[RMDB]
Record summary: An RNA of 177 nucleotides, treated with 2A3 and DMS and read out base by base. Reactivities are given for positions 27 through 126. Values are in units of 0.01, from 0 to 300, in steps of 10. For 2A3 the reverse transcriptase was SuperScript II with manganese. DMS adducts were read by reverse transcription with MarathonRT.
RNA sequence: GGGAACGACUCGAGUAGAGUCGAAAAAAAAGCCGGGCGUAGAUCGCCAGGCUGCGUCAACCGCAGCUUCCAACACACGCCUCUACAACCGCCCUUAUCGAAGACGGGCACCCCGAGCUCCUCAGACAGGGAGCGAGGGGUUCGCCCCUCGCUCCCUAAAAGAAACAACAACAACAAC
Reactivity to 2A3 in 0.01 (KOAc 150mM, MgCl2 10mM, bicine 150mM(pH8.5), 24C), signal-to-noise 1, nucleotides 027 to 126: a000a000a000a000g040c060c030g030g000g000c060g000u130a070g040a220u160c010g010c030c000a000g040g000c000u010g010c000g040u050c050a100a060c050c000g010c020a000g000c020u090u020c070c020a160a010c020a000c010a000c080g030c010c010u070c030u040a100c030a090a030c030c020g060c010c020c020u100u100a190u180c090g070a020a000g030a040c040g010g010g020c020a040c000c020c000c010g020a030g020c010u000c000c000u000c000a000g000a000c060
Reactivity to DMS in 0.01 (KOAc 150mM, MgCl2 10mM, bicine 150mM(pH8.5), 24C), signal-to-noise 1, nucleotides 027 to 126: a140a000a140a080g020c070c090g000g000g000c100g000u000a070g030a150u040c030g050c010c000a060g000g000c000u000g000c000g020u000c200a000a160c300c030g000c020a070g000c000u000u080c020c100a070a050c080a150c030a090c100g000c050c000u000c050u040a060c070a070a030c060c040g000c010c000c020u000u000a110u050c210g000a120a040g070a100c190g000g000g000c060a120c040c010c000c060g000a130g010c030u000c000c010u000c040a040g000a040c210